RNA sequence: GGGAACGACUCGAGUAGAGUCGAAAAAGUCACCUAUUACGAUAGGUGACAUUUGAACCAGCGAACAAUUCAGUUGCGAGAUUCGAGGUUUCAGUCUGGAUCAUAGUAGCCAUUACGAUGGCUACAACUCACUCCCGACUGUUCGCAGUCGGGAGAACAUAAUAGAGGCGUUCGCGCCUCUAUUAUGAAAAGAAACAACAACAACAAC
Reactivity to 2A3 in 0.01 (KOAc 150mM, MgCl2 10mM, bicine 150mM(pH8.5), 24C), signal-to-noise 3, nucleotides 027 to 156: a000g000u000c000a000c000c010u000a000u030u060a100c250g060a010u010a010g010g000u000g010a000c000a000u020u000u090g020a000a010c000c000a020g190c000g010a010a010c010a010a090u010u020c000a000g010u000u010g010c000g010a000g000a010u000u000c000g000a020g060g040u130u210u290c050a030g140u090c020u000g000g010a000u040c020a080u130a130g000u000a000g000c010c000a000u010u060a070c260g180a040u010g010g000c000u010a000c000a000a010c020u070c050a090c010u000c000c000c000g000a000c000u030g030u080u090c240g000c100a000g000u000c000g000g000g000a000g000a000a000
Reactivity to DMS in 0.01 (KOAc 150mM, MgCl2 10mM, bicine 150mM(pH8.5), 24C), signal-to-noise 1, nucleotides 027 to 156: a110g010u000c000a020c000c000u010a000u010u000a120c230g050a140u000a020g010g000u000g010a000c000a020u000u000u020g010a150a200c040c030a120g030c050g000a080a110c040a150a050u000u000c050a060g030u000u010g010c000g000a070g010a090u000u020c030g000a180g030g000u020u000u000c000a110g010u010c030u000g020g020a080u020c160a110u020a120g050u000a020g010c010c000a020u000u000a170c190g030a120u000g000g020c000u000a000c000a000a050c080u020c050a120c010u010c000c020c000g010a030c020u010g000u000u010c180g020c010a020g020u000c020g010g040g000a000g000a000a050